[RMDB]
RNA sequence: GGGAACGACUCGAGUAGAGUCGAAAAACAUAGGCCAUGCUUACGAGCAUGGCCUAUGACGAAUCUCAAGCAAUCAAGCAUUCUACUUCUAUUGCAACACUGAGGAGCUUACGAGCUCCUCAGUCAAAAAAGAGAGUAAUGUUCGCAUUACUCUCAAGAAGCAGACAAAGUUCGCUUUGUCUGCUUCAAAAGAAACAACAACAACAAC
Reactivity to 2A3 in 0.01 (KOAc 150mM, MgCl2 10mM, bicine 150mM(pH8.5), 24C), signal-to-noise 2, nucleotides 027 to 156: a010c020a000u000a000g000g020c100c000a000u030g010c010u150u110a160c250g060a050g000c010a000u000g000g000c000c000u000a000u000g000a000c000g060a030a050u030c010u010c020a030a020g010c000a010a050u080c010a040a000g040c050a150u170u100c010u100a100c030u040u070c010u080a050u010u100g010c040a080a070c000a070c060u000g000a000g000g000a000g010c000u090u010a090c190g050a000g000c000u010c000c000u000c000a000g010u000c000a000a050a010a000a000a000g000a000g000a020g000u000a000a000u000g000u020u050c110g020c060a000u000u000a000c000u000c010u000c020a000a010